[RMDB]
Description:
Source: RMDB library OK2TST, as collected in RNAgym. An RNA of 177 nucleotides, treated with 2A3 and DMS and read out base by base. The reactions ran in a buffer of 150 mM KOAc, 10 mM MgCl2 and 150 mM bicine (pH 8.5), at 24 C. For 2A3 the reverse transcriptase was SuperScript II with manganese.
RNA sequence: GGGAACGACUCGAGUAGAGUCGAAAAGGCGCUCAAAACCGUUCAGCGAUAUGUACUUUUUGGCUGCGGAAAAACUCAACGUGCCGAUCGGCGAGAUCUUACAUGUUGGGGACGAUCUCACCACUGACGUGAUUAAAUCGUUCGCGAUUUAAUCACGAAAAGAAACAACAACAACAAC
Reactivity to 2A3 in 0.01 (KOAc 150mM, MgCl2 10mM, bicine 150mM(pH8.5), 24C), signal-to-noise 4, nucleotides 027 to 126: g020g020c020g000c030u020c060a040a050a040a120c030c000g030u150u110c030a010g030c010g040a020u020a060u230g200u200a220c120u170u200u060u080u160g120g030c010u020g010c020g000g000a080a060a000a020a000c040u060c050a000a020c020g010u010g050c010c030g020a040u050c040g040g040c120g050a060g010a030u000c010u040u200a030c000a040u140g050u070u090g090g020g000g000a000c020g000a040u020c010u030c030a040c030c020a070c110u090g030a030
Reactivity to DMS in 0.01 (KOAc 150mM, MgCl2 10mM, bicine 150mM(pH8.5), 24C), signal-to-noise 4, nucleotides 027 to 126: g020g000c030g010c040u010c130a100a060a130a090c020c010g000u020u010c030a020g050c030g010a040u000a050u010g010u020a120c220u020u000u000u000u000g010g030c040u000g000c020g000g000a040a020a040a080a110c100u000c040a060a060c120g000u000g030c110c300g000a050u000c080g010g010c140g000a100g010a010u000c010u000u000a190c040a040u010g000u010u010g010g020g010g020a050c200g000a060u010c030u000c070a090c010c020a170c130u010g020a150